[RMDB]
RNA sequence: GGGAACGACUCGAGUAGAGUCGAAAAGCCGGCUUGGAUCUGGGGCUUGGCCCGGUGGUAACGCCAUAAGAGCGCGUAUUUCAUUGGUCGCUACCGCGGCGCUUUGCGAGUAGCCGAAAACGACGACUCCUAGUUAGAUGUUCGCAUCUAACUAGGAAAAAGAAACAACAACAACAAC
Reactivity to DMS in 0.01 (KOAc 150mM, MgCl2 10mM, bicine 150mM(pH8.5), 24C), signal-to-noise 7, nucleotides 027 to 126: g000c010c010g010g010c050u020u010g000g000a060u010c050u000g000g010g010g000c020u010u000g010g010c020c000c010g000g010u000g000g000u010a050a060c040g020c020c020a100u020a120a110g010a090g000c080g010c060g000u020a040u020u010u000c060a130u020u010g000g010u020c050g010c020u010a060c060c060g010c010g010g010c100g010c040u010u000u020g010c070g000a100g000u010a080g020c000c040g000a030a020a090a100c070g000a100c120g000a120c110
Reactivity to 2A3 in 0.01 (KOAc 150mM, MgCl2 10mM, bicine 150mM(pH8.5), 24C), signal-to-noise 7, nucleotides 027 to 126: g040c010c000g000g010c050u040u090g070g060a140u100c050u060g070g000g040g030c030u060u060g040g020c010c000c000g030g000u050g010g020u060a090a040c040g000c010c030a050u110a240a070g060a030g040c070g010c020g030u060a170u030u120u070c100a080u030u140g090g000u110c030g010c030u040a050c020c010g020c040g060g020c070g010c060u060u110u130g050c030g020a070g040u030a040g020c040c020g020a050a040a000a020c060g080a010c020g030a040c020